[RMDB]
RNA sequence: GGGAACGACUCGAGUAGAGUCGAAAAUCUAUUAACUAUACAUUCUGAUGGUACAUAAUCAUCACAGCUGUUCAUAUAGAGACGGUUUGAUAACUCCACUGAACACCUUCUCGCUGUACCAUUUACCUGAAAAUUACUGGUUCGCCAGUAAUUUUCAAAAAGAAACAACAACAACAAC
Reactivity to 2A3 in 0.01 (KOAc 150mM, MgCl2 10mM, bicine 150mM(pH8.5), 24C), signal-to-noise 2, nucleotides 027 to 126: u030c010u020a090u200u110a150a070c080u070a050u150a300c080a060u160u170c080u100g020a020u020g000g000u020a010c010a050u230a160a140u150c120a020u060c020a000c000a100g050c000u020g000u080u070c030a030u150a020u050a270g030a010g010a070c040g060g080u040u090u140g090a080u060a090a030c010u040c060c030a070c090u060g030a050a010c000a040c040c010u080u000c050u010c060g070c040u040g020u010a010c010c000a010u030u030u100a010c030c040
Reactivity to DMS in 0.01 (KOAc 150mM, MgCl2 10mM, bicine 150mM(pH8.5), 24C), signal-to-noise 2, nucleotides 027 to 126: u010c030u010a060u000u020a100a060c040u000a100u020a100c050a080u000u040c070u000g000a010u000g010g000u000a020c080a030u010a060a090u000c050a080u000c060a050c190a060g030c170u000g010u030u000c090a090u010a130u000a080g000a030g000a050c080g000g000u010u000u020g000a080u000a090a150c050u010c060c070a110c160u000g010a080a090c060a020c080c010u010u010c020u000c030g020c180u000g010u000a010c020c020a040u010u020u010a080c130c080